Structure probing data (DMS) for a 177-nucleotide construct. The DMS profile rests on 1,396 reads. In probing experiments dimethyl sulfate is read out at A N1 and C N3, which are open when not base-paired. It was measured as part of the RMDB library TTRINS.
RNA sequence: GGGAACGACUCGAGUAGAGUCGAAAAGAUAUGGACCCAUCUACCUGGAGUAAACGUCUUCUCCUGCCUCGGAAACGAGGUAAAGGAGAAGACGUUUACGAUGAAAGGUAGAGUGGGUCCUAAGUCAGCUAAAUGAAGACUUCGGUCUUCAUUUAGCAAAAGAAACAACAACAACAAC
Reactivity to DMS in 0.01 (KOAc 150mM, MgCl2 10mM, bicine 150mM(pH8.5), 24C), signal-to-noise 1, nucleotides 027 to 126: g000a030u020a300u020g000g010a020c000c000c000a050u000c000u000a020c000c000u000g000g000a060g020u000a010a010a000c000g010u000c000u000u000c010u000c000c010u010g000c000c010u020c000g000g000a090a100a290c000g030a000g000g000u000a020a030a030g000g000a050g030a000a030g000a000c000g010u010u000u000a000c000g020a130u000g030a080a170a020g000g000u000a010g000a010g030u000g000g010g000u000c000c000u000a010a100g030u000c070a100